[RMDB]
RNA sequence: GGGAACGACUCGAGUAGAGUCGAAAAAACGAGCUAUGAUGCAAGCAAUGUUUUUCUUUAGUGCUGGAGCAGUUUUUGGUUAUUGCUAUCGUCAUUACGAUGCUAAAGUUAAAAAAGCCAAUGAUUCAAAAAAGGUACACUUCGGUGUACCUUUUUUAAAAGAAACAACAACAACAAC
Reactivity to DMS in 0.01 (KOAc 150mM, MgCl2 10mM, bicine 150mM(pH8.5), 24C), signal-to-noise 3, nucleotides 027 to 126: a030a050c060g000a190g000c010u000a070u020g010a070u000g030c140a100a040g010c040a050a100u020g000u000u000u000u020u010c020u010u000u010a020g020u020g000c060u000g020g010a050g010c070a030g000u000u000u000u030u010g000g000u010u000a050u000u010g000c020u020a050u000c010g020u000c170a100u000u020a060c070g010a050u010g000c030u000a050a070a040g020u010u010a000a040a080a070a050a070g030c040c050a030a030u010g010a150u030u000c080
The record gives the reactivity of an RNA of 177 nucleotides to DMS. DMS adducts were read by reverse transcription with MarathonRT. Conditions: 150 mM KOAc, 10 mM MgCl2 and 150 mM bicine (pH 8.5), 24 C.